Chemical mapping of a 207-nucleotide RNA with 2A3 and DMS.
RNA sequence: GGGAACGACUCGAGUAGAGUCGAAAACAAGGUGAAAUUUUGGGCAACAGCAGGUCUGUGAUGCUCCUCAAUGUUCUGGGCGACACGCGCACUACAAUGUCAGUGAGAACAAGAAAAACGACUUUUGUCGAACCUACUUGAUCAAAAGAGUGGGGAAGAAUUGUAACCAGUUCGCUGGUUACAAUUCAAAAGAAACAACAACAACAAC
Reactivity to 2A3 in 0.01 (KOAc 150mM, MgCl2 10mM, bicine 150mM(pH8.5), 24C), signal-to-noise 7, nucleotides 027 to 156: c030a030a030g050g020u070g060a060a100a150u100u090u090u110g030g010g000c030a060a020c010a050g080c030a050g050g120u070c030u030g040u050g070a110u060g020c010u050c020c010u050c040a080a120u080g010u090u020c020u030g000g040g040c020g040a030c010a010c060g050c010g010c030a030c040u110a040c090a070a100u110g050u060c020a010g020u010g090a050g020a060a030c040a070a050g100a040a070a010a020a010c020g030a020c020u120u110u160u300g030u020c010g010a040a030c000c000u000a010c000u020u040g040a080u190c090a060a040a020a000g020a010g000u010g000g000g000g000a020a060
Reactivity to DMS in 0.01 (KOAc 150mM, MgCl2 10mM, bicine 150mM(pH8.5), 24C), signal-to-noise 2, nucleotides 027 to 156: c040a060a110g030g030u010g000a060a050a140u000u000u000u000g020g000g040c020a080a100c040a060g030c060a080g000g010u000c040u000g030u000g000a100u000g030c010u000c030c010u010c050a080a120u000g020u000u010c060u000g020g020g000c040g020a070c040a030c030g010c030g010c080a070c040u010a070c040a070a070u000g010u000c030a100g020u020g020a120g020a040a070c040a030a130g000a020a040a090a090a090c050g020a030c020u000u000u010u000g050u000c040g000a030a110c010c000u000a010c010u000u010g020a080u000c140a100a140a130a190g000a020g000u000g010g020g000g010a080a090

The reactions ran in a buffer of 150 mM KOAc, 10 mM MgCl2 and 150 mM bicine (pH 8.5), at 24 C. The DMS profile rests on 4,023 reads. DMS adducts were read by reverse transcription with MarathonRT.